[RMDB]
RNA sequence: GGGAACGACUCGAGUAGAGUCGAAAACGGGGUCUAGCCGAGACAAAACAGCGCGGAAGGUCUUCUCACUGGGCCGCCGGAACCGGACCCCUAAUUGGGCCAACACAUCAUCGGAAGCGGUGGCCGCCUGCCCAGUGCUCUUCGGAGCACUGGGCAGAAAAGAAACAACAACAACAAC
Reactivity to 2A3 in 0.01 (KOAc 150mM, MgCl2 10mM, bicine 150mM(pH8.5), 24C), signal-to-noise 1, nucleotides 027 to 126: c030g000g000g000g040u000c000u030a150g000c070c000g070a090g000a080c150a040a300a070a000c000a050g130c040g000c010g130g000a070a000g050g000u000c000u150u000c040u040c000a030c110u090g000g060g000c080c000g000c000c000g040g000a020a080c040c040g070g160a090c000c000c000c000u030a120a120u040u160g010g060g000c020c000a070a000c070a000c000a200u220c040a020u090c020g070g000a010a010g130c000g000g010u000g010g010c000c000g060c000
Chemical mapping of a 177-nucleotide RNA with 2A3. Reactivities are rounded to 0.1 and cut off at 0 and 3. Reactivities are given for positions 27 through 126. 2A3 adducts were read by reverse transcription with SuperScript II with manganese. For 2A3, 423 sequencing reads were counted. The reactions ran in a buffer of 150 mM KOAc, 10 mM MgCl2 and 150 mM bicine (pH 8.5), at 24 C.